This 177-nucleotide RNA was probed chemically with DMS. For DMS the reverse transcriptase was MarathonRT. Reactivities are given for positions 27 through 126. For DMS, 3,828 sequencing reads were counted.

[RMDB]
RNA sequence: GGGAACGACUCGAGUAGAGUCGAAAAUCCAUCCCCCCCCCCAGGAGGUCCCCCCAGGAAUGGCGGGACCCCACUCUGCAGGGUCCGCGUUCCAUUCUUUCUUACCUUGUGGCCGGCAUGGUCCCAGCAUCUUGAUAAUGUUCGCAUUAUCAAGAUGAAAAGAAACAACAACAACAAC
Reactivity to DMS in 0.01 (KOAc 150mM, MgCl2 10mM, bicine 150mM(pH8.5), 24C), signal-to-noise 3, nucleotides 027 to 126: u010c020c030a180u010c000c000c000c000c000c000c000c000c000c000a040g010g000a030g000g010u000c020c010c010c040c000c040a060g000g000a020a020u000g010g020c040g020g000g000a020c000c000c000c030a060c140u010c110u000g020c110a140g000g000g010u000c010c010g020c030g010u000u000c020c000a060u000u000c030u000u000u010c070u000u010a100c070c060u000u000g020u010g010g010c020c010g000g010c120a070u000g010g000u000c000c020c030a210g010